[RMDB]
Conditions: 150 mM KOAc, 10 mM MgCl2 and 150 mM bicine (pH 8.5), 24 C. Structure probing data (DMS and 2A3) for a 177-nucleotide construct. The 2A3 profile rests on 1,441 reads.
RNA sequence: GGGAACGACUCGAGUAGAGUCGAAAACUCCUAUAGUCGUUCGGACCGCCUUCUAUGCUCGCGUCUUUCGAGGGGUACGUCGCCACUGGCCGCUGAAAAGUGGUGUGGCACUGCUCCGGCGAGGACGGAUUAAAAGCCUCUUCGGAGGCUUUUAAUCAAAAGAAACAACAACAACAAC
Reactivity to DMS in 0.01 (KOAc 150mM, MgCl2 10mM, bicine 150mM(pH8.5), 24C), signal-to-noise 4, nucleotides 027 to 126: c110u020c000c010u010a100u040a030g010u010c000g010u000u010c030g020g000a160c040c030g020c050c030u000u000c050u020a070u010g010c030u020c060g030c010g000u000c010u000u010u010c000g010a300g010g000g000g010u000a000c190g010u000c160g000c000c000a010c000u060g010g030c000c000g020c000u000g000a090a040a110a010g030u000g010g010u000g020u000g010g010c010a010c010u000g000c000u000c000c000g000g000c050g010a020g000g010a010c010g020
Reactivity to 2A3 in 0.01 (KOAc 150mM, MgCl2 10mM, bicine 150mM(pH8.5), 24C), signal-to-noise 2, nucleotides 027 to 126: c020u040c000c000u050a030u050a080g050u000c040g040u000u050c000g040g060a070c010c010g040c020c040u080u040c020u100a120u150g070c010u030c030g070c010g000u020c020u050u290u100c010g020a000g000g010g000g000u010a030c280g020u010c150g010c010c000a000c000u050g240g020c010c000g030c020u000g030a050a080a060a030g010u000g000g000u060g010u000g040g000c010a000c010u000g010c000u000c000c010g060g100c020g000a000g000g000a000c000g010